The data come from the RNA Mapping Database (RMDB), library OK2TRN. Chemical mapping of a 177-nucleotide RNA with 2A3 and DMS.
[RMDB]
RNA sequence: GGGAACGACUCGAGUAGAGUCGAAAAGCUAGCGUGCGAUCUCAUGACAUGCGAUCUGAGUACACUAGACAUGUCGAUCAGUCCAUGGAUCAGUGAUCGUAGAGACUACGCUACAUGACUAGGUACGUAAGUAGUUUUGUUUCGACAAAACUACUUAAAAAGAAACAACAACAACAAC
Reactivity to 2A3 in 0.01 (KOAc 150mM, MgCl2 10mM, bicine 150mM(pH8.5), 24C), signal-to-noise 9, nucleotides 027 to 126: g020c020u030a010g020c020g040u040g010c010g020a040u000c030u010c040a230u070g030a040c010a020u050g030c100g060a070u100c020u030g010a010g070u100a010c120a050c020u040a030g050a140c030a060u070g010u020c040g040a120u060c040a000g010u000c010c000a030u080g080g030a080u050c030a050g060u040g070a010u010c010g020u030a030g040a010g010a100c020u030a020c150g010c020u020a020c010a080u090g030a050c020u050a040g080g050u110a030c040g040
Reactivity to DMS in 0.01 (KOAc 150mM, MgCl2 10mM, bicine 150mM(pH8.5), 24C), signal-to-noise 9, nucleotides 027 to 126: g010c050u000a040g010c030g020u000g010c030g010a040u000c040u000c050a120u010g010a150c050a040u000g010c160g010a060u010c030u000g010a080g010u010a160c120a050c010u000a070g010a160c250a100u000g000u000c050g010a160u000c070a020g010u000c010c020a070u010g010g010a090u000c020a100g020u010g010a020u000c000g010u000a070g000a210g010a070c030u000a040c100g010c040u000a040c070a050u010g010a110c060u000a040g000g010u000a050c140g010
Notes
For DMS, 54,793 sequencing reads were counted. The RNA was probed in 150 mM KOAc, 10 mM MgCl2 and 150 mM bicine (pH 8.5) at 24 C.